[RMDB]
RNA sequence: GGGAACGACUCGAGUAGAGUCGAAAAGACUCCGUUCGCGGAGUCAAAGGGGUCAUGGCGGAAGUGAAAUGGAGGAGAUACUGAAGCCUCCACGGUAUUCUCCGUUGAAAUUUCAUGGACAUGACGGAGGCACCCAAAAGAUGCGUUUCGACGCAUCCAAAGAGUUGCCUUUCGAGGCAACUCUUUGAAAAGAAACAACAACAACAAC
Reactivity to 2A3 in 0.01 (KOAc 150mM, MgCl2 10mM, bicine 150mM(pH8.5), 24C), signal-to-noise 1, nucleotides 027 to 156: g000a020c010u000c010c000g000u030u060c300g000c010g060g000a010g000u000c000a070a000a000g040g030g040g010u010c000a010u000g020g100c300g140g000a000a000g000u010g000a000a050a010u020g000g010a010g020g000a000g000a000u000a000c000u030g070a180a000g030c000c000u000c000c010a010c000g000g040u020a090u260u270c000u000c000c000g060u070u000g000a000a000a020u010u010u000c000a000u020g000g010a050c000a000u000g000a000c000g010g000a000g010g030c000a060c010c040c000a020a120a000a030g010a000u020g000c000g010u030u060u210c110g030a010c000g000c000a000u000c020